About this RNA:
An RNA of 177 nucleotides, treated with DMS and 2A3 and read out base by base. For DMS the reverse transcriptase was MarathonRT. It was measured as part of the RMDB libraries RFM100 and RFMREP.
RNA sequence: GGGAACGACUCGAGUAGAGUCGAAAAUCGACUAAGGUUCGAUUCGAGCGAAAGCGAGAGAGCGUUGCCACAGGCAACGGCCCGAAGGUGAGGAGCGAAGCGACGAAUAAUCCUUCCCCCACCACCAAACGUGAGAGAGAUUCGUCUCUCUCACGUUAAAAGAAACAACAACAACAAC
Reactivity to DMS in 0.01 (KOAc 150mM, MgCl2 10mM, bicine 150mM(pH8.5), 24C), signal-to-noise 5, nucleotides 027 to 126: u030c020g020a040c020u040a110a160g030g020u060u010c010g020a020u000u030c040g010a290g000c000g000a080a120a120g000c020g000a180g010a120g030a130g020c010g000u000u000g000c020c000a120c240a130g000g020c000a010a020c000g010g000c020c000c000g000a100a070g010g010u000g020a150g000g000a100g020c190g000a020a000g020c190g000a010c020g000a130a070u040a080a300u000c010c010u010u000c000c030c000c000c000a030c000c010a080c140c090a050
Reactivity to 2A3 in 0.01 (KOAc 150mM, MgCl2 10mM, bicine 150mM(pH8.5), 24C), signal-to-noise 7, nucleotides 027 to 126: u040c000g000a010c050u130a190a100g220g020u120u040c010g020a090u040u030c020g030a020g020c010g060a140a010a010g030c010g030a030g010a010g000a020g080c010g000u000u020g000c000c020a180c090a250g000g000c000a000a010c000g030g060c000c010c020g060a110a070g010g020u020g030a150g010g020a090g040c150g040a010a000g080c050g120a010c030g100a090a040u240a180a020u050c000c000u000u010c010c000c000c000c000a010c000c000a010c010c060a110

2A3 adducts were read by reverse transcription with SuperScript II with manganese. The RNA was probed in 150 mM KOAc, 10 mM MgCl2 and 150 mM bicine (pH 8.5) at 24 C.